[RMDB]
The record gives the reactivity of an RNA of 207 nucleotides to DMS and 2A3. For 2A3 the reverse transcriptase was SuperScript II with manganese.

RNA sequence: GGGAACGACUCGAGUAGAGUCGAAAAACGCACACCUCAAAAGCAGCAGCCAGGUUAGCUCCCACUGUAGGGAUCUCCUCCUGUAGGCCAUCAUUUGAUUUUCUAGGGCCAAGAAAGAGCGGCACUAUUUACUCCAAAUCUUCAGCCUUGCAGAGUAAUUUAUGGUAUCGUUCGCGAUACCAUAAAUAAAAGAAACAACAACAACAAC
Reactivity to DMS in 0.01 (KOAc 150mM, MgCl2 10mM, bicine 150mM(pH8.5), 24C), signal-to-noise 2, nucleotides 027 to 156: a080c070g000c060a080c030a120c030c030u000c060a030a050a110a100g000c050a100g000c050a070g020c040c020a090g030g030u000u000a090g010c050u010c000c010c010a090c080u000g020u010a150g020g030g010a080u000c030u010c030c010u000c050c030u000g000u010a090g010g040c040c030a030u000c060a100u020u010u000g000a120u000u020u010u000c040u000a140g010g020g050c000c010a080a110g000a110a090a100g000a110g020c110g040g010c050a040c040u000a050u000u000u000a050c040u010c030c000a060a080a130u000c020u010u000c020a070g000c000c010u000u030g030c000a070g020a140g020u000a080
Reactivity to 2A3 in 0.01 (KOAc 150mM, MgCl2 10mM, bicine 150mM(pH8.5), 24C), signal-to-noise 2, nucleotides 027 to 156: a000c050g010c020a050c000a030c030c040u090c040a090a110a050a020g030c030a020g010c010a000g030c050c010a020g000g020u040u090a010g010c010u030c000c020c010a070c080u180g090u170a120g020g000g040a040u000c010u020c020c020u020c000c010u070g040u080a030g040g000c020c010a070u110c040a050u090u070u170g060a080u000u130u080u060c050u060a050g020g010g010c000c000a030a010g060a030a090a000g040a040g020c090g010g010c030a010c060u050a080u080u110u110a050c020u030c020c010a030a040a130u030c010u060u050c030a000g020c000c000u060u060g020c030a010g040a010g100u130a100